[RMDB]
RNA sequence: GGGAACGACUCGAGUAGAGUCGAAAAUCAAGCAAAACCCCAAAACCUUACACUGAGAGCAUUUAGCCUGAUUACUCUUUAAAUCAAAUGAGGCAAUAGAGAGAAACUCGAGAGGUGAAAACCCCACAUAACGAUCUAGGCUUCGGCCUAGAUCGAACGAUUUGUAGAUCUUCGGAUCUACAAAUCGAAAAGAAACAACAACAACAAC
Reactivity to 2A3 in 0.01 (KOAc 150mM, MgCl2 10mM, bicine 150mM(pH8.5), 24C), signal-to-noise 2, nucleotides 027 to 156: u040c010a000a030g050c010a020a070a040a160c030c000c000c020a110a100a010a070c040c040u130u130a100c110a090c120u160g040a040g010a000g030c010a010u020u050u070a010g010c030c000u020g010a050u010u090a080c010u000c020u100u130u180a110a090a010u170c050a050a040a080u090g050a020g010g020c010a030a010u150a020g000a000g000a010g030a080a110a010c010u010c040g020a010g000a030g030g000u020g020a050a000a000a020c020c000c030c000a060c010a050u160a080a010c030g000a000u000c000u000a000g000g000c000u030u060c300g070g050c000c000u000a010g000a000u000c000g000a000a000

Description
Chemical mapping of a 207-nucleotide RNA with 2A3.